[RMDB]
RNA sequence: GGGAACGACUCGAGUAGAGUCGAAAAUUAUGUCAGUCACCAAUUUGGCCGAGAAUGGGCGGCGCAACACCACAUUCCCUGCGUGGAAGUGCUGCAUCAUCAUGCUCAUUUGGCGGCUUGCCUGGCACCGCUUGGAUGAAUUCGUUCAUCCAAGCGGAAAAGAAACAACAACAACAAC
Reactivity to DMS in 0.01 (KOAc 150mM, MgCl2 10mM, bicine 150mM(pH8.5), 24C), signal-to-noise 2, nucleotides 027 to 126: u000u020a090u000g030u000c000a040g000u010c040a190c290c120a060a100u000u030u000g000g020c010c010g020a300g000a030a030u000g000g010g030c040g030g020c090g010c010a040a070c080a080c000c110a110c040a240u000u000c020c030c000u000g030c250g010u020g010g030a070a080g000u000g010c010u010g030c040a080u000c120a100u020c100a190u010g000c020u010c020a090u000u000u000g020g010c000g000g030c000u000u000g010c060c000u010g030g020c050a180
Reactivity to 2A3 in 0.01 (KOAc 150mM, MgCl2 10mM, bicine 150mM(pH8.5), 24C), signal-to-noise 2, nucleotides 027 to 126: u150u080a090u110g010u020c010a020g010u040c010a010c080c020a000a060u160u110u110g040g020c050c020g020a020g050a040a030u030g020g000g000c010g000g000c020g000c010a060a010c020a010c040c010a030c020a090u030u050c000c000c010u180g090c120g040u070g030g030a110a090g030u040g010c020u070g010c050a090u060c010a060u010c010a030u300g000c000u010c040a030u000u000u080g270g060c040g030g020c000u000u050g030c010c000u000g030g000c020a040